Structure probing data (2A3 and DMS) for a 207-nucleotide construct. It was measured as part of the RMDB library RNAMAK.
[RMDB]
RNA sequence: GGGAACGACUCGAGUAGAGUCGAAAACCUGGUUCGCCAGGCCAUAGUCCUAAGUCACCAUCUAGAGGUCUGCGCAAGCCUGUUCGGAAACGAACAGGUGAUGACCGCAGACUACCCACCUAGUUGGUGAUAUGGAAAGCGCAUCCUUCGGGAUGAAUUAGCUAGUAAGUUUCGACUUACUAGCUAAAAAAGAAACAACAACAACAAC
Reactivity to 2A3 in 0.01 (KOAc 150mM, MgCl2 10mM, bicine 150mM(pH8.5), 24C), signal-to-noise 4, nucleotides 027 to 156: c000c000u020g010g050u080u060c220g050c070c020a040g040g000c020c010a190u180a050g160u000c000c000u040a100a060g020u000c000a000c000c000a000u000c010u000a000g000a010g020g000u000c000u000g000c010g010c010a080a040g000c010c000u000g010u010u000c010g010g020a100a090a070c010g000a000a000c000a010g000g020u000g010a040u090g030a020c070c030g010c000a000g000a000c000u000a010c000c010c010a090c000c000u000a010g000u010u000g010g010u000g000a000u000a000u010g000g040a070a070a020g190c150g010c040a000u030c000c030u070u130c270g130g000g000a000u020g020a020a150
Reactivity to DMS in 0.01 (KOAc 150mM, MgCl2 10mM, bicine 150mM(pH8.5), 24C), signal-to-noise 3, nucleotides 027 to 156: c000c000u000g030g010u010u010c260g060c030c010a030g010g050c010c060a110u000a120g030u000c010c000u000a040a290g050u000c000a010c000c000a000u000c000u000a050g000a120g040g020u000c000u010g000c000g010c070a190a300g010c020c010u020g000u000u010c000g040g030a280a080a300c020g020a020a000c000a010g000g030u000g000a030u000g010a130c300c000g010c030a010g000a030c000u000a000c040c020c040a300c170c000u010a020g010u020u010g020g010u000g000a010u000a110u000g010g000a040a070a110g040c060g000c020a030u000c000c000u000u000c280g020g020g000a000u000g000a070a110